This 177-nucleotide RNA was probed chemically with DMS and 2A3. The RNA was probed in 150 mM KOAc, 10 mM MgCl2 and 150 mM bicine (pH 8.5) at 24 C. For DMS the reverse transcriptase was MarathonRT. Source: RMDB library OK1LIB, as collected in RNAgym.
[RMDB]
RNA sequence: GGGAACGACUCGAGUAGAGUCGAAAAAGAUGAUCCAGCGUCUGCUGCGCGACCACUACCGCGAGAUCGCCGAAGAGAUCACCCGGUCGCUCACCGAGUCCCUGCAGGCGACCAUCGCGGCGGCGCACACUAUGGGGUAGUUCGCUACCCCAUAGUGAAAAGAAACAACAACAACAAC
Reactivity to DMS in 0.01 (KOAc 150mM, MgCl2 10mM, bicine 150mM(pH8.5), 24C), signal-to-noise 5, nucleotides 027 to 126: a080g000a090u000g010a060u000c030c120a130g020c070g030u020c090u010g020c080u000g000c090g030c060g000a150c110c110a080c100u030a210c020c010g000c010g000a030g020a090u000c010g000c020c010g000a280a280g000a070g000a040u030c040a060c060c030c000g000g020u010c170g020c150u030c070a120c020c010g000a160g000u010c020c000c000u000g010c030a300g000g000c020g000a000c040c020a110u000c000g000c000g010g000c110g010g000c010g020c040a300
Reactivity to 2A3 in 0.01 (KOAc 150mM, MgCl2 10mM, bicine 150mM(pH8.5), 24C), signal-to-noise 6, nucleotides 027 to 126: a000g120a130u110g000a020u020c070c010a050g030c030g120u090c090u180g050c040u060g010c020g000c000g200a280c010c060a060c080u160a030c000c000g000c000g000a010g000a040u020c000g000c010c000g010a000a000g080a020g000a070u040c020a010c010c000c010g040g010u090c100g010c120u100c040a030c000c010g030a000g070u070c000c000c000u000g020c030a000g000g000c010g000a010c010c000a070u030c000g000c000g010g000c010g050g000c010g000c000a010